[RMDB]
RNA sequence: GGGAACGACUCGAGUAGAGUCGAAAAUGGAAAGAUCAGCAGAUAUACACACUGUCCAGAUCUUAUCUACGUACUGAGCAGAGCUCCAAUCUUUGGGAAAUCCAUCUACCUUGGCGAAGCCAUUUUCUUCAAUGCUGAUGAUGGCACCAAACAUAAAGCGAUUAUGGUAGUUCGCUACCAUAAUCGCAAAAGAAACAACAACAACAAC
Reactivity to 2A3 in 0.01 (KOAc 150mM, MgCl2 10mM, bicine 150mM(pH8.5), 24C), signal-to-noise 1, nucleotides 027 to 156: u090g050g000a020a010a010g000a020u000c000a010g040c000a000g040a030u100a010u190a300c100a010c020a000c060u030g060u000c050c080a060g040a020u000c000u000u020a250u000c000u010a030c050g040u010a090c070u100g010a000g060c000a010g020a060g050c000u000c040c060a070a090u050c090u120u100u070g000g010g000a000a110a060u000c010c010a020u000c050u060a040c010c020u020u000g040g000c040g060a050a000g000c040c000a000u050u030u030u030c070u010u020c100a120a230u280g040c070u040g050a030u050g010a000u050g030g030c010a000c030c010a090a050a020c080a060u300a160a020a040